[RMDB]
RNA sequence: GGGAACGACUCGAGUAGAGUCGAAAAGCACAAAUUGAUUUUGUCUGAGACAUGUGGGGCUACAUUUCUUAGCGACUCAUCCAUUCUACUAGAUGCUCUGUGGUUUAGGAUUUUCUAUCCAUUGGUCGGCAUGAGUAGGAUUCGUCCUACUCAUGCCAAAAGAAACAACAACAACAAC
Reactivity to DMS in 0.01 (KOAc 150mM, MgCl2 10mM, bicine 150mM(pH8.5), 24C), signal-to-noise 3, nucleotides 027 to 126: g000c100a060c080a040a040a090u000u010g000a090u010u000u000u000g030u000c030u000g000a100g000a040c050a020u000g030u000g010g000g020g010c070u010a080c070a040u010u010u000c020u000u000a060g000c040g010a030c090u000c040a110u000c050c060a060u010u010c090u000a080c050u010a080g000a090u000g000c070u000c040u000g020u000g000g010u000u000u000a100g010g010a140u000u010u000u000c080u000a110u000c010c010a060u000u010g010g010u010c170
Reactivity to 2A3 in 0.01 (KOAc 150mM, MgCl2 10mM, bicine 150mM(pH8.5), 24C), signal-to-noise 1, nucleotides 027 to 126: g030c010a020c010a040a050a060u130u210g060a060u050u150u040u090g040u050c000u020g030a000g000a020c040a020u040g020u050g010g030g080g050c060u150a020c020a050u070u090u020c020u000u030a030g000c000g060a000c000u020c010a060u000c020c010a080u070u040c010u050a190c000u050a020g030a080u110g010c010u010c000u080g040u040g000g050u030u010u110a040g000g020a050u100u060u000u000c000u010a110u000c010c070a000u050u140g080g010u050c040
Source: RMDB library OK2TRN, as collected in RNAgym. The record gives the reactivity of an RNA of 177 nucleotides to DMS and 2A3. 2A3 adducts were read by reverse transcription with SuperScript II with manganese.